[RMDB]
RNA sequence: GGGAACGACUCGAGUAGAGUCGAAAACACGUCUUUUCGGAGAGAAGACCUUCAACUAUCGACUGUAUAGUAUGCUGCAAGAGAUUACUGCUGCUCACUUUUUGUCGGAUGUCUUUCCAAGGGAUCAUGACUAUGGCAUGUUCGCAUGCCAUAGUCAAAAAGAAACAACAACAACAAC
Reactivity to DMS in 0.01 (KOAc 150mM, MgCl2 10mM, bicine 150mM(pH8.5), 24C), signal-to-noise 2, nucleotides 027 to 126: c070a100c160g000u000c010u000u000u010u000c110g020g040a090g000a010g000a030a070g010a080c090c070u000u000c090a100a060c100u040a060u010c050g020a070c040u010g000u000a080u000a050g020u000a090u000g000c030u000g000c040a050a070g000a220g000a160u000u000a070c110u000g000c020u000g000c020u000c120a060c080u010u000u000u010u000g010u010c050g020g000a050u000g000u000c020u000u000u000c000c010a050a060g000g010g030a090u000c140a100
Reactivity to 2A3 in 0.01 (KOAc 150mM, MgCl2 10mM, bicine 150mM(pH8.5), 24C), signal-to-noise 2, nucleotides 027 to 126: c050a010c030g030u000c000u050u070u050u070c110g070g000a040g000a000g010a120a030g100a030c020c000u130u110c070a070a050c020u050a030u180c010g060a050c010u070g050u120a060u030a080g020u010a040u110g040c010u010g010c040a120a040g080a020g030a200u080u190a140c010u020g040c030u020g000c010u020c040a000c030u060u030u000u090u080g000u000c000g030g020a090u110g020u040c020u020u040u000c020c000a020a040g050g000g000a020u100c050a100

Chemical mapping of a 177-nucleotide RNA with DMS and 2A3.
DMS adducts were read by reverse transcription with MarathonRT.
The reactions ran in a buffer of 150 mM KOAc, 10 mM MgCl2 and 150 mM bicine (pH 8.5), at 24 C.
Source: RMDB library OK2TRN, as collected in RNAgym.
As a SHAPE reagent, 2A3 marks flexible, mostly unpaired nucleotides at the ribose 2'-OH.
The 2A3 profile rests on 1,823 reads.